An RNA of 177 nucleotides, treated with 2A3 and DMS and read out base by base. Values cover nucleotides 27 to 126.
RNA sequence: GGGAACGACUCGAGUAGAGUCGAAAACAAAAUCAUCCAUCAAUGGAAAAGCAUCGCACUGGUCGAGGAGGACGUUUUGCUUCCGAAUGGCCACUCGGUCACACAUACCACGAUUUCACACCCCGGACUGCUACUACGUGUUCGCACGUAGUAGCAGAAAAGAAACAACAACAACAAC
Reactivity to 2A3 in 0.01 (KOAc 150mM, MgCl2 10mM, bicine 150mM(pH8.5), 24C), signal-to-noise 1, nucleotides 027 to 126: c010a000a080a010a090u180c030a020u040c030c000a020u030c040a070a160u160g070g000a060a040a030a050g030c010a030u130c060g050c020a050c060u030g000g020u040c050g050a020g090g050a050g050g060a020c020g040u130u080u060u180g050c010u060u000c010c010g070a080a100u070g020g000c020c000a010c000u020c020g080g010u010c020a010c010a000c020a030u060a070c000c010a020c090g050a040u030u040u040c040a050c020a070c050c000c020c000g020g070a060
Reactivity to DMS in 0.01 (KOAc 150mM, MgCl2 10mM, bicine 150mM(pH8.5), 24C), signal-to-noise 1, nucleotides 027 to 126: c070a090a040a060a080u040c030a100u000c060c020a000u000c090a150a100u000g010g010a020a070a070a180g000c050a030u030c070g020c090a020c050u000g060g010u000c050g000a130g000g000a130g010g000a040c140g020u000u000u000u000g000c030u000u000c010c000g000a110a090u000g000g030c000c000a070c020u000c050g030g000u010c000a080c060a050c070a040u000a070c050c070a000c070g010a080u000u020u070c090a100c120a290c050c010c010c020g000g010a260
The reactions ran in a buffer of 150 mM KOAc, 10 mM MgCl2 and 150 mM bicine (pH 8.5), at 24 C.
For 2A3, 1,248 sequencing reads were counted.
The DMS profile rests on 755 reads.